[RMDB]
RNA sequence: GGGAACGACUCGAGUAGAGUCGAAAAUAAUCCGUUUAGGAUUGGGAGGGCCUGGAAGAAAAACAUCUAGCUAUGUUAAUAGAUGUUCUUUACAGAUGCACAUUUUACCCCACAAAGGAUAGCUUUUGGGGGAAAAUGCUGUCCUUUAUGGAAGAAAAAUUUACGUCGAUUUCGAUCGACGUAAAUUAAAAGAAACAACAACAACAAC
Reactivity to 2A3 in 0.01 (KOAc 150mM, MgCl2 10mM, bicine 150mM(pH8.5), 24C), signal-to-noise 1, nucleotides 027 to 156: u040a000a010u000c000c020g000u100u070u260a090g000g000a000u000u010g000g020g020a020g040g000g060c020c000u040g030g020a020a020g010a090a060a020a020a020c000a000u010c000u040a030g050c070u120a110u200g140u220u180a160a080u010a060g010a010u010g000u050u050c000u130u020u020a120c000a000g010a110u050g080c000a020c000a080u100u130u130u150a050c040c000c000c000a010c030a050a000a000g020g020a060u050a010g040c020u000u080u130u030g040g000g000g000g000a000a000a000a070u080g010c010u000g010u020c000c040u000u000u050a110u070g010g000a050a060g080a070a290a050

This 207-nucleotide RNA was probed chemically with 2A3. It was measured as part of the RMDB library OK3TST. For 2A3 the reverse transcriptase was SuperScript II with manganese. Conditions: 150 mM KOAc, 10 mM MgCl2 and 150 mM bicine (pH 8.5), 24 C.